[RMDB]
RNA sequence: GGGAACGACUCGAGUAGAGUCGAAAAGACGCGUAAUGAGGAGGAUGUGAUUCUGAGGUUCAAUUCUCAUUGGCUCUCGUGGAGAACGCGCCCUCCGUUGGCUGUUGCUCUGGUAAAGUAGACUCAGCGAAGGCUAAAUCUACUUUAUCAUUAGAUGCCAUCCCGUUUUGUUCGCAAAACGGGAUGGAAAAGAAACAACAACAACAAC
Reactivity to 2A3 in 0.01 (KOAc 150mM, MgCl2 10mM, bicine 150mM(pH8.5), 24C), signal-to-noise 1, nucleotides 027 to 156: g070a010c020g000c010g110u150a160a000u240g240a090g080g060a020g020g010a030u020g090u000g030a180u080u000c060u070g000a030g050g040u000u170c000a000a000u300u020c230u110c240a010u010u000g070g000c030u000c010u000c070g110u100g130g010a070g000a020a000c010g010c000g010c020c000c000u000c000c000g000u000u000g010g010c090u030g000u010u000g030c030u000c030u110g020g010u030a010a010a010g000u000a000g010a020c030u060c230a020g000c030g080a200a030g180g000c000u000a000a030a000u000c000u000a000c000u000u000u000a010u000c000a000u000u030a070g040a010u110g040